Structure probing data (DMS) for a 177-nucleotide construct. In probing experiments dimethyl sulfate is read out at A N1 and C N3, which are open when not base-paired. It was measured as part of the RMDB library OK2TRN. Values cover nucleotides 27 to 126.
RNA sequence: GGGAACGACUCGAGUAGAGUCGAAAACGCAGCAAAGGGGCACAGGCCGGGGACCGCGAGAGGUGGCAAAGUGGCACCGGGCGCCGAGGCUGCUGAGCGCUCGCCGAGACGGCGACCGGACUGGCUGCACCCACAGUUUGUUCGCAAACUGUGGGUGAAAAGAAACAACAACAACAAC
Reactivity to DMS in 0.01 (KOAc 150mM, MgCl2 10mM, bicine 150mM(pH8.5), 24C), signal-to-noise 1, nucleotides 027 to 126: c120g030c020a030g030c030a060a130a130g040g000g000g000c090a300c040a060g000g010c000c020g040g000g030g010a180c060c050g040c040g000a220g010a110g070g000u030g000g060c030a030a080a060g060u000g010g000c020a040c020c020g000g020g000c060g010c040c010g040a130g030g000c020u000g010c010u000g010a190g020c110g020c100u000c090g000c020c010g030a150g010a140c000g020g010c020g000a200c000c040g010g000a060c020u000g000g000c020u000g010

The reactions ran in a buffer of 150 mM KOAc, 10 mM MgCl2 and 150 mM bicine (pH 8.5), at 24 C.